[RMDB]
RNA sequence: GGGAACGACUCGAGUAGAGUCGAAAAUGGAAUACUCUAGUGAGUUCAAGAUAGAAGUAUUAAACUGGAAACAACAGCACCAAGCUUCGCUUUCAGAAACAGCACUACACUUCAAUCUCUCUUCACCGUCCAUACCGUUAUUCGUAACGGUAUGGACAAAAGAAACAACAACAACAAC
Reactivity to 2A3 in 0.01 (KOAc 150mM, MgCl2 10mM, bicine 150mM(pH8.5), 24C), signal-to-noise 3, nucleotides 027 to 126: u080g050g040a040a030u040a090c020u000c030u080a070g070u050g220a070g030u120u070c060a020a060g010a040u070a060g040a090a020g050u050a050u100u130a080a070a040c020u020g060g010a020a070a000c020a040a020c020a040g010c020a010c110c080a100a020g010c020u060u080c050g010c030u010u080u070c030a000g050a080a090a010c050a030g070c020a000c100u120a030c010a000c040u070u020c020a040a040u000c010u010c010u010c030u110u100c030a080c090c040
Reactivity to DMS in 0.01 (KOAc 150mM, MgCl2 10mM, bicine 150mM(pH8.5), 24C), signal-to-noise 2, nucleotides 027 to 126: u060g020g010a100a050u000a100c010u010c060u000a100g030u010g000a080g010u030u000c050a110a080g010a100u000a060g010a040a050g010u000a010u030u000a050a090a110c040u010g000g000a040a080a020c070a030a090c250a060g030c040a110c150c110a060a170g000c030u000u000c300g030c060u000u000u010c040a030g000a080a060a070c100a070g000c040a010c060u010a050c050a020c060u000u000c020a020a080u000c020u000c050u000c060u000u000c080a080c090c080